The record gives the reactivity of an RNA of 177 nucleotides to 2A3 and DMS.
[RMDB]
RNA sequence: GGGAACGACUCGAGUAGAGUCGAAAAGAUAUGGAUUCCAGCGGGUCAUCGAUCUUACUCGUCUCGGAAACGAGACGAGGUAAGGGAGACUACUGGAAUCCUAAGUCAAAGGUGGCUUCGGCCACCAGUUGGAACACAGGUUCGCCUGUGUUCCAACAAAAGAAACAACAACAACAAC
Reactivity to 2A3 in 0.01 (KOAc 150mM, MgCl2 10mM, bicine 150mM(pH8.5), 24C), signal-to-noise 1, nucleotides 027 to 126: g010a000u110a070u170g010g000a020u020u020c000c000a000g050c300g300g070g010u000c020a180u300c190g160a100u040c000u000u000a030c010u000c000g000u020c000u000c000g000g080a090a190a060c000g000a000g020a020c000g000a000g000g000u020a000a000g000g020g040a130g000a000c020u000a000c000u000g040g020a000a000u000c000c000u000a020a020g070u000c020a110a030a130g000g000u010g010g000c040u130u170c300g260g020c050c010a000c000c000a000
Reactivity to DMS in 0.01 (KOAc 150mM, MgCl2 10mM, bicine 150mM(pH8.5), 24C), signal-to-noise 1, nucleotides 027 to 126: g000a050u000a300u010g000g040a000u000u000c000c000a010g010c100g030g010g000u020c010a240u000c210g020a160u030c010u010u000a010c000u000c000g020u000c010u020c010g010g020a060a190a150c010g030a000g000a000c000g010a010g020g000u030a040a000g020g010g020a130g000a020c000u000a170c000u000g000g000a000a000u000c000c000u000a010a070g010u000c040a090a110a140g010g050u000g000g000c000u000u010c200g000g000c000c010a010c000c000a000
Reactivities are given for positions 27 through 126. It was measured as part of the RMDB library TTRDES.